Conditions: 150 mM KOAc, 10 mM MgCl2 and 150 mM bicine (pH 8.5), 24 C. Structure probing data (2A3) for a 207-nucleotide construct. It was measured as part of the RMDB library VIROID.
RNA sequence: GGGAACGACUCGAGUAGAGUCGAAAAUAGAAAGGCUAAGCACGUCGCAAUGACGUAAGGUGGGACUUUUCCCUCGAGUUUGAGCGGUCGAACUCAGAGGGGAGUGUGAUCCUGGUACCGCCGUAGAAACUGGAUUACGACGUCUACCCGGGAUUCAGAAUCCAUACCUGUUCGCAGGUAUGGAUUCAAAAGAAACAACAACAACAAC
Reactivity to 2A3 in 0.01 (KOAc 150mM, MgCl2 10mM, bicine 150mM(pH8.5), 24C), signal-to-noise 2, nucleotides 027 to 156: u130a020g010a000a010a000g000g000c010u020a000a000g000c030a000c020g000u010c010g010c110a120a200u200g060a040c050g030u080a060a050g020g000u040g000g040g010a050c070u020u040u050u140c000c000c000u000c000g010a000g000u010u000u010g060a080g090c170g070g140u150c020g020a000a000c000u020c070a040g020a000g020g000g000g000a030g000u110g050u040g000a020u060c010c000u000g000g000u000a030c030c000g010c000c000g000u020a050g090a090a100a030c090u070g030g000a040u090u070a020c010g010a010c040g110u000c020u020a020c020c060c040g040g050g010a030u090u040c020a020